[RMDB]
RNA sequence: GGGAACGACUCGAGUAGAGUCGAAAAGGCAAAUUUCACCGCAAGUUGUAAUGCGCUUCUUUGCCGAGGCCAACGAUCAACCAGCUUUGAAUGACGCUGCUCUGAACAAUGACAAAAAAGAUGAAAAUGCGCUCCUUUUAUUCGUAAAAGGAGCGCAAAAAGAAACAACAACAACAAC
Reactivity to 2A3 in 0.01 (KOAc 150mM, MgCl2 10mM, bicine 150mM(pH8.5), 24C), signal-to-noise 1, nucleotides 027 to 126: g000g080c000a010a010a010u000u000u000c060a070c000c040g000c000a010a000g030u000u000g000u090a210a100u060g030c040g080c000u000u030c040u160u130u050g060c020c040g000a000g000g070c000c040a060a000c000g000a110u000c000a000a010c010c000a090g000c000u130u140u060g000a030a030u000g000a200c000g000c060u080g030c030u000c000u000g180a150a060c060a120a270u300g200a000c220a130a060a080a000a000a000g080a030u180g050a070a050a000a050
Reactivity to DMS in 0.01 (KOAc 150mM, MgCl2 10mM, bicine 150mM(pH8.5), 24C), signal-to-noise 1, nucleotides 027 to 126: g000g000c070a050a040a160u000u000u000c060a070c150c010g000c080a020a110g000u000u000g020u020a200a040u000g000c080g000c060u000u000c130u000u050u030g000c040c000g000a020g100g000c040c000a120a160c300g000a170u020c060a030a030c050c000a250g000c090u000u000u000g000a100a100u000g000a170c220g000c000u000g040c010u000c040u020g000a190a000c190a040a060u050g000a040c300a000a000a090a060a020a060g000a160u010g000a150a070a070a060
An RNA of 177 nucleotides, treated with 2A3 and DMS and read out base by base. The data come from the RNA Mapping Database (RMDB), library OK1LIB.